Chemical mapping of a 177-nucleotide RNA with DMS and 2A3. DMS adducts were read by reverse transcription with MarathonRT. The reactions ran in a buffer of 150 mM KOAc, 10 mM MgCl2 and 150 mM bicine (pH 8.5), at 24 C. For DMS, 3,075 sequencing reads were counted. The 2A3 profile rests on 1,120 reads.
RNA sequence: GGGAACGACUCGAGUAGAGUCGAAAAGGUGGGAAGACAAAGGAGACCAGAGCUCUCACUGUGGUUUCCAAGGGAAGGAACAGGCGAGUAGGCUUACAGUUGGCUAGUGUGAAUGAUUUCAGCAGGCUAAAUGCCGAGCAUUCGUGCUCGGCAUUUAAAAAGAAACAACAACAACAAC
Reactivity to DMS in 0.01 (KOAc 150mM, MgCl2 10mM, bicine 150mM(pH8.5), 24C), signal-to-noise 3, nucleotides 027 to 126: g000g060u000g000g010g010a020a080g020a070c150a020a300a160g000g000a100g020a060c040c020a050g010a030g000c070u000c150u010c260a060c020u000g000u000g000g000u000u020u000c010c000a180a070g000g010g010a050a110g020g010a060a050c070a060g040g000c060g030a090g040u040a100g000g000c040u000u020a060c180a000g000u010u010g000g000c080u000a030g030u000g000u000g030a080a040u000g000a100u020u000u010c080a050g010c080a050g000g010c130
Reactivity to 2A3 in 0.01 (KOAc 150mM, MgCl2 10mM, bicine 150mM(pH8.5), 24C), signal-to-noise 2, nucleotides 027 to 126: g150g040u200g020g060g000a060a000g040a020c070a040a170a020g000g020a020g020a000c010c010a030g010a000g080c030u030c010u060c210a030c000u060g000u020g120g020u000u020u000c000c020a040a010g050g000g020a040a050g010g020a030a010c020a050g000g000c020g070a050g040u030a040g130g000c050u030u130a060c020a080g020u010u020g080g000c000u030a080g030u020g010u000g160a060a040u130g060a110u010u150u000c000a040g060c040a040g040g070c040